[RMDB]
RNA sequence: GGGAACGACUCGAGUAGAGUCGAAAAAACAAAGGGCAAGAGCAAGCUCAAGUGAGUGCUCCUUACUACUGUGAUGGGACGUGCAAGAGUAAGCUCAAGUGAGUACUCCUUGCUAUUGGGAUGGGACCCAUUGCGUACUAUUCGUAGUACGCAAUGGAAAAGAAACAACAACAACAAC
Reactivity to 2A3 in 0.01 (KOAc 150mM, MgCl2 10mM, bicine 150mM(pH8.5), 24C), signal-to-noise 5, nucleotides 027 to 126: a000a000c160a060a080a020g080g010g010c080a070a010g020a010g090c030a080a030g020c020u050c100a040a050g190u140g080a020g000u040g010c010u010c000c020u010u080a020c000u010a020c020u050g050u050g100a100u130g040g070g070a040c110g070u090g010c030a010a050g010a010g060u030a050a050g010c030u040c050a010a030g070u050g010a010g010u000a030c020u030c030c020u000u020g000c010u070a100u100u130g040g000g040a070u130g050g010g030a040c010
Reactivity to DMS in 0.01 (KOAc 150mM, MgCl2 10mM, bicine 150mM(pH8.5), 24C), signal-to-noise 7, nucleotides 027 to 126: a080a040c080a040a090a100g000g000g000c140a080a080g010a040g020c080a070a100g000c110u010c070a070a060g020u010g010a020g020u000g000c010u010c040c030u000u000a040c030u000a100c070u010g010u010g000a120u020g010g020g010a080c220g030u000g000c060a030a070g000a030g010u000a020a090g010c160u000c120a040a070g010u010g000a020g020u000a040c030u000c080c030u000u000g010c060u000a100u010u000g000g000g000a140u000g000g000g000a220c160